[RMDB]
RNA sequence: GGGAACGACUCGAGUAGAGUCGAAAAGUACACCCUCCCUCCCUCCCAAAUGCGCGCAAAUAAAGGGAGGGACUCAGGGAUGAGUAGGCCAAAAGGCCAUAUCCCGAAGACGCGCGACGGGACAAAAAGCUAGAUUAUGGUUCGCCAUAAUCUAGCUAAAAGAAACAACAACAACAAC
Reactivity to 2A3 in 0.01 (KOAc 150mM, MgCl2 10mM, bicine 150mM(pH8.5), 24C), signal-to-noise 2, nucleotides 027 to 126: g030u030a070c010a110c090c000c030u020c000c000c000u030c000c000c010u000c010c040c000a030a120a030u190g000c020g000c000g000c030a060a100a030u190a150a110a030g000g010g000a000g000g000g000a010c010u010c030a050g000g020g000a010u080g000a010g110u220a060g000g000c020c000a110a300a120a260g000g010c000c000a020u030a050u050c020c020c000g010a060a040g100a020c040g000c000g000c000g000a040c010g000g000g000a020c070a010a090a000a010
Reactivity to DMS in 0.01 (KOAc 150mM, MgCl2 10mM, bicine 150mM(pH8.5), 24C), signal-to-noise 1, nucleotides 027 to 126: g000u010a160c110a180c000c020c010u000c000c000c000u010c010c000c030u010c010c000c010a050a060a120u010g010c000g020c000g010c090a050a060a080u000a070a090a050g000g000g000a010g010g000g010a000c030u020c190a150g010g020g010a120u000g060a060g010u000a070g060g020c000c030a070a080a100a130g000g040c000c000a080u000a060u000c000c010c000g010a110a080g020a060c050g000c000g010c030g020a140c070g000g000g000a130c200a070a020a080a050
The record gives the reactivity of an RNA of 177 nucleotides to 2A3 and DMS. It was measured as part of the RMDB library M2PK90. The reactions ran in a buffer of 150 mM KOAc, 10 mM MgCl2 and 150 mM bicine (pH 8.5), at 24 C. For DMS, 982 sequencing reads were counted. DMS adducts were read by reverse transcription with MarathonRT. For 2A3, 1,623 sequencing reads were counted. 2A3 adducts were read by reverse transcription with SuperScript II with manganese. Values cover nucleotides 27 to 126.